[RMDB]
An RNA of 207 nucleotides, treated with 2A3 and DMS and read out base by base. The DMS profile rests on 4,980 reads. It was measured as part of the RMDB library OK3TST. For 2A3 the reverse transcriptase was SuperScript II with manganese. The 2A3 profile rests on 9,058 reads. The RNA was probed in 150 mM KOAc, 10 mM MgCl2 and 150 mM bicine (pH 8.5) at 24 C.
RNA sequence: GGGAACGACUCGAGUAGAGUCGAAAAGUCAUGCCUUCGGGCAUGACAGGUACCGAGAGGUACCAAAUAGCGUACAGUAGACUCAGACUGUACGCUAAAAAAGUGUGUGUUCAAUAAGGUCCAAUUGAACACACACUAAAAUGGGUCAAGAGUGUGACCUAUAAUGGUAUUUCGAUACCAUUAUAGGAAAAGAAACAACAACAACAAC
Reactivity to 2A3 in 0.01 (KOAc 150mM, MgCl2 10mM, bicine 150mM(pH8.5), 24C), signal-to-noise 5, nucleotides 027 to 156: g000u000c000a000u010g010c010c000u040u090c220g040g000g010c000a000u000g000a000c000a000g000g010u000a000c000c010g030a050g010a020g060g000u000a000c000c000a020a020a030u060a000g000c000g000u000a010c000a010g000u050a040g030a050c010u010c050a010g010a030c000u000g010u000a000c000g000c000u000a000a000a020a000a000a010g000u000g000u010g000u000g000u000u000c000a000a000u090a120a060g140g060u100c060c040a030a020u000u000g000a000a000c000a000c000a000c000a000c010u000a000a000a000a010u030g010g020g000u010c020a050a030g110a050g150u100g020u040g070a040
Reactivity to DMS in 0.01 (KOAc 150mM, MgCl2 10mM, bicine 150mM(pH8.5), 24C), signal-to-noise 2, nucleotides 027 to 156: g020u000c010a010u000g010c020c000u000u020c300g120g040g010c000a000u010g000a000c000a030g010g010u000a010c000c010g010a300g020a300g020g000u010a020c000c000a030a030a090u000a030g010c020g050u000a030c010a020g020u000a060g010a040c050u000c030a090g020a070c000u000g010u000a000c000g010c000u000a000a020a060a110a020a040g030u000g050u000g020u000g010u000u000c000a030a020u000a070a080g030g010u020c110c110a240a100u000u010g000a010a010c010a000c010a000c000a000c010u000a000a040a080a090u000g010g000g010u020c030a080a100g010a170g000u010g000u000g000a160